[RMDB]
RNA sequence: GGGAACGACUCGAGUAGAGUCGAAAAACGCGAGCAGGUAGCCGAUUUGACGACCAAGGUCACACACCGGGAUCGUUUGGAUGUUGUCGCAGCUGACGACUGACGGUUGAUUCAGCCCGUUCACCGCACGAAGGUAGUGUUUCGACACUACCUUCGUAAAAGAAACAACAACAACAAC
Reactivity to DMS in 0.01 (KOAc 150mM, MgCl2 10mM, bicine 150mM(pH8.5), 24C), signal-to-noise 4, nucleotides 027 to 126: a070c090g000c060g010a090g020c030a100g000g010u000a040g010c030c010g010a180u000u000u000g030a060c020g010a020c040c020a060a070g020g010u000c090a080c240a080c180a100c020c010g020g000g010a040u000c040g000u010u010u010g020g000a080u000g010u000u000g010u000c020g010c100a120g000c130u000g010a040c010g010a040c000u000g010a140c070g010g010u000u000g010a190u010u000c070a050g010c010c020c010g020u000u000c050a150c000c010g000c220
Reactivity to 2A3 in 0.01 (KOAc 150mM, MgCl2 10mM, bicine 150mM(pH8.5), 24C), signal-to-noise 3, nucleotides 027 to 126: a000c050g020c030g030a070g000c020a020g040g060u050a010g030c000c000g030a060u130u000u180g030a000c000g000a000c030c030a140a150g050g010u060c030a010c000a010c010a020c140c040g060g000g050a200u040c030g030u000u050u100g080g030a100u060g040u110u070g030u040c030g000c110a090g100c080u110g020a040c010g010a020c010u020g040a050c000g030g030u030u030g040a100u070u090c010a010g000c000c000c000g000u020u050c110a140c070c020g030c030